[RMDB]
RNA sequence: GGGAACGACUCGAGUAGAGUCGAAAAAACAUGCAUUGCGUGUUUGUGGAGUUUAGCAUAUUACUUUGAGUUAAUCGGCGUGUUCCACGCAGGCUUUUGUCUUGAACGAUUUACCAUAGAAUAACAAUCUAUAUCCUUACUUCGGUAAGGAUAUAGAAAAAGAAACAACAACAACAAC
Reactivity to DMS in 0.01 (KOAc 150mM, MgCl2 10mM, bicine 150mM(pH8.5), 24C), signal-to-noise 6, nucleotides 027 to 126: a020a020c010a010u000g010c010a160u010u010g030c010g040u000g000u000u000u010g050u010g010g000a130g010u000u000u010a130g020c100a080u000a040u000u000a050c040u000u010u000g010a120g010u000u000a030a030u000c040g000g010c010g020u010g000u020u000c110c030a030c020g010c040a070g010g010c020u010u000u010u010g010u000c010u000u000g010a110a100c060g010a070u000u000u000a080c020c010a080u010a060g010a090a060u010a050a090c150a070a120
Reactivity to 2A3 in 0.01 (KOAc 150mM, MgCl2 10mM, bicine 150mM(pH8.5), 24C), signal-to-noise 3, nucleotides 027 to 126: a020a010c040a030u020g050c070a130u050u220g010c060g020u010g030u000u050u120g040u040g050g050a080g020u080u160u200a060g000c050a020u020a050u240u020a110c030u140u130u200g140a160g060u080u070a010a000u030c030g000g000c010g010u070g050u100u000c070c010a010c000g010c000a010g070g000c000u060u110u120u300g030u000c020u050u040g060a070a020c030g030a090u020u030u070a100c020c010a020u040a070g130a080a040u100a100a030c010a030a020
The record gives the reactivity of an RNA of 177 nucleotides to DMS and 2A3. The DMS profile rests on 9,230 reads. Conditions: 150 mM KOAc, 10 mM MgCl2 and 150 mM bicine (pH 8.5), 24 C. The 2A3 profile rests on 2,034 reads. DMS (dimethyl sulfate) methylates the pairing face of unpaired adenines and cytosines. For 2A3 the reverse transcriptase was SuperScript II with manganese.